An RNA of 177 nucleotides, treated with DMS and 2A3 and read out base by base. 2A3 adducts were read by reverse transcription with SuperScript II with manganese. The 2A3 profile rests on 3,684 reads. Values are in units of 0.01, from 0 to 300, in steps of 10. The data come from the RNA Mapping Database (RMDB), library TTRDES. The RNA was probed in 150 mM KOAc, 10 mM MgCl2 and 150 mM bicine (pH 8.5) at 24 C.
[RMDB]
RNA sequence: GGGAACGACUCGAGUAGAGUCGAAAAGAUAUGGAAUCGAAGGAGAUGUGUUGCUAUCGGAAACGAUAGACAACACUAAUCUCCCGAUUCCUAAGUCAAAAUCAUCGGUAGUUCGCUACCGAUGAAACAGAAGAGCGAAGUUCGCUUCGCUCUUCUGAAAAGAAACAACAACAACAAC
Reactivity to DMS in 0.01 (KOAc 150mM, MgCl2 10mM, bicine 150mM(pH8.5), 24C), signal-to-noise 2, nucleotides 027 to 126: g000a030u000a300u010g000g010a010a000u000c000g000a210a160g010g000a020g020a020u000g020u000g020u010u000g010c010u000a000u000c000g010g000a130a080a210c020g000a020u000a000g000a150c010a030a000c000a000c000u010a060a060u000c000u000c000c000c000g010a020u000u000c000c000u000a010a100g000u000c020a060a080a090a160u000c000a020u000c000g000g010u000a010g000u000u010c300g020c010u000a000c000c000g010a000u000g000a010a070a160
Reactivity to 2A3 in 0.01 (KOAc 150mM, MgCl2 10mM, bicine 150mM(pH8.5), 24C), signal-to-noise 2, nucleotides 027 to 126: g020a020u070a070u220g010g010a000a020u020c040g030a300a160g060g000a000g000a020u150g030u010g010u050u000g010c010u000a010u000c000g050g050a200a060a030c030g020a000u000a000g070a070c010a010a000c000a000c000u000a030a040u020c000u000c030c010c000g000a000u010u000c000c000u010a140a030g040u010c000a130a020a000a300u060c010a000u020c000g010g010u010a010g030u060u110c300g030c100u000a000c000c000g000a000u000g000a000a000a010